[RMDB]
Annotation: The record gives the reactivity of an RNA of 207 nucleotides to 2A3. Reactivities are rounded to 0.1 and cut off at 0 and 3. For 2A3, 1,301 sequencing reads were counted. It was measured as part of the RMDB library RNAMAK.
RNA sequence: GGGAACGACUCGAGUAGAGUCGAAAACUUCCGAUUCGUCGGAAGAAAAACCUUUGUGAUAGGCAGGUAAUGGAGAUAAAGUCCUCCCAUUGGGAGGCUUUAUCUAUGAAGUUAUAUUGGCCUAUCACUCUGGUAAAGGAAUUGGUUCGCCAAUUCCCACGUGACGAUACUUCGGUAUCGUCACGUGAAAAGAAACAACAACAACAAC
Reactivity to 2A3 in 0.01 (KOAc 150mM, MgCl2 10mM, bicine 150mM(pH8.5), 24C), signal-to-noise 2, nucleotides 027 to 156: c000u000u000c010c000g010a020u000u080c200g080u030c020g090g040a000a000g030a130a050a000a000a000c000c000u010u000u010g000u000g010a000u000a020g000g020c030a010g010g020u020a020a000u040g080g020a010g020a010u000a010a000a050g180u300c020c000u000c010c010c020a280u250u300g000g000g000a000g010g010c000u000u000u000a000u020c000u010a070u020g010a010a000g010u040u000a020u020a100u090u140g210g040c000c000u000a000u000c000a000c010u000c010u000g020g010u050a110a070a020g010g000a020a000u010u000g000g050u090u110c270g020c140c010a010a000u000u010c000c010